[RMDB]
RNA sequence: GGGAACGACUCGAGUAGAGUCGAAAAAUUCAAUUGCCUUAUUAUGACCUUAUUAGACUUGCUUCAAUGGUUUGUACUAGGCAUUCUCCGACUGGUUAUCCUCUUACUGAGCAAGCUAUGCAAUCUAUACUACUCCCUAUUUCGAUAGGGAGUAGUAAAAAGAAACAACAACAACAAC
Reactivity to 2A3 in 0.01 (KOAc 150mM, MgCl2 10mM, bicine 150mM(pH8.5), 24C), signal-to-noise 4, nucleotides 027 to 126: a000u110u080c030a000a090u100u040g020c000c010u120u110a090u100u050a090u190g030a050c010c010u110u110a100u080u070a120g130a300c030u020u080g040c020u130u120c070a080a160u070g020g040u030u030u140g060u010a030c010u010a020g020g000c010a020u090u020c050u030c030c020g070a050c050u030g010g010u040u030a040u080c000c020u040c050u080u090a130c060u040g000a010g030c000a020a010g000c020u010a010u090g020c020a050a070u010c030u080a140
Reactivity to DMS in 0.01 (KOAc 150mM, MgCl2 10mM, bicine 150mM(pH8.5), 24C), signal-to-noise 7, nucleotides 027 to 126: a110u010u000c120a080a080u000u000g010c010c030u000u010a070u000u000a040u010g010a050c030c030u000u010a110u010u000a080g010a080c030u000u000g010c060u000u000c100a060a090u010g000g010u000u000u010g010u000a030c090u000a030g010g010c040a070u000u010c060u010c040c060g010a100c070u000g000g000u010u010a070u000c050c020u000c100u000u000a080c160u000g000a040g010c020a030a030g010c050u010a040u000g010c190a060a050u000c100u000a150